[RMDB]
RNA sequence: GGGAACGACUCGAGUAGAGUCGAAAAUGGCUUCUUGUUACUGCGGUGAGGUGGAUAUAUCGAAAUAUGAUAAAUCGCAGAAUCAGAUGACUAAGGAAGUUGAACUGGAGAUAUAUCGUCGUCUAGGACACUUAUCAUGGUUCGCCAUGAUAAGUGUAAAAGAAACAACAACAACAAC
Reactivity to 2A3 in 0.01 (KOAc 150mM, MgCl2 10mM, bicine 150mM(pH8.5), 24C), signal-to-noise 4, nucleotides 027 to 126: u090g040g000c000u020u020c010u010u040g020u050u140a110c020u020g010c030g070g000u010g040a090g080g080u110g060g030a010u040a000u000a000u120c040g060a150a160a040u240a060u090g080a010u040a060a140a000u010c020g000c020a010g040a040a020u060c020a010g060a240u080g040a070c030u080a040a070g060g030a050a040g030u100u120g060a090a080c030u060g020g060a040g020a020u020a000u040a050u090c070g110u030c010g020u000c050u030a040g100g050
Reactivity to DMS in 0.01 (KOAc 150mM, MgCl2 10mM, bicine 150mM(pH8.5), 24C), signal-to-noise 7, nucleotides 027 to 126: u000g010g010c010u000u000c010u000u010g020u000u000a090c020u010g010c030g020g010u000g020a110g000g030u010g020g010a050u000a050u000a050u000c060g010a110a100a110u000a080u010g000a080u010a040a100a030u000c030g010c020a030g000a120a080u010c130a080g010a120u000g000a080c050u010a100a080g010g000a030a040g010u000u000g010a070a130c060u010g000g000a160g010a030u010a050u000a050u000c050g010u000c050g010u000c020u000a100g010g000
Chemical mapping of a 177-nucleotide RNA with 2A3 and DMS. The DMS profile rests on 10,272 reads. For 2A3 the reverse transcriptase was SuperScript II with manganese. DMS adducts were read by reverse transcription with MarathonRT. The RNA was probed in 150 mM KOAc, 10 mM MgCl2 and 150 mM bicine (pH 8.5) at 24 C.